Annotation
Source: RMDB library OK1LIB, as collected in RNAgym. Chemical mapping of a 177-nucleotide RNA with 2A3 and DMS. The reactions ran in a buffer of 150 mM KOAc, 10 mM MgCl2 and 150 mM bicine (pH 8.5), at 24 C. For DMS, 24,408 sequencing reads were counted.

RNA sequence: GGGAACGACUCGAGUAGAGUCGAAAACGGAAUCUCGAGGGCGGGGUUCGGCGGGAUUCGUCCGAAGUACUCGAGGCCGUCGGGCAGUGCUUCCCGAAUACCUUCCUCGUGGCGGCCGCCGUGGGCCUGCCGUAUUUAGUUUCGACUAAAUACGGCAAAAAGAAACAACAACAACAAC
Reactivity to 2A3 in 0.01 (KOAc 150mM, MgCl2 10mM, bicine 150mM(pH8.5), 24C), signal-to-noise 9, nucleotides 027 to 126: c010g020g030a070a090u060c000u020c030g010a060g030g040g030c120g010g050g010g030u040u040c010g030g000c050g000g080g060a140u110u120c050g030u040c050c020g020a040a010g060u070a060c030u030c080g020a060g050g020c020c000g060u050c010g000g030g000c040a060g070u040g150c040u090u060c000c000c000g000a020a070u180a190c010c000u040u050c010c010u030c030g030u060g030g010c020g030g010c020c010g000c000c020g030u070g020g030g020c000c020
Reactivity to DMS in 0.01 (KOAc 150mM, MgCl2 10mM, bicine 150mM(pH8.5), 24C), signal-to-noise 6, nucleotides 027 to 126: c030g000g000a070a050u020c020u000c010g000a060g010g000g020c070g010g000g010g010u010u010c030g000g020c170g000g000g010a090u020u020c070g000u020c020c030g000a050a050g010u020a090c040u000c050g010a060g000g010c070c050g010u010c020g000g000g020c090a070g020u010g000c050u010u000c050c000c010g000a090a070u030a080c060c050u010u010c020c020u000c040g020u010g000g010c060g000g010c040c050g000c030c010g010u000g010g000g000c040c030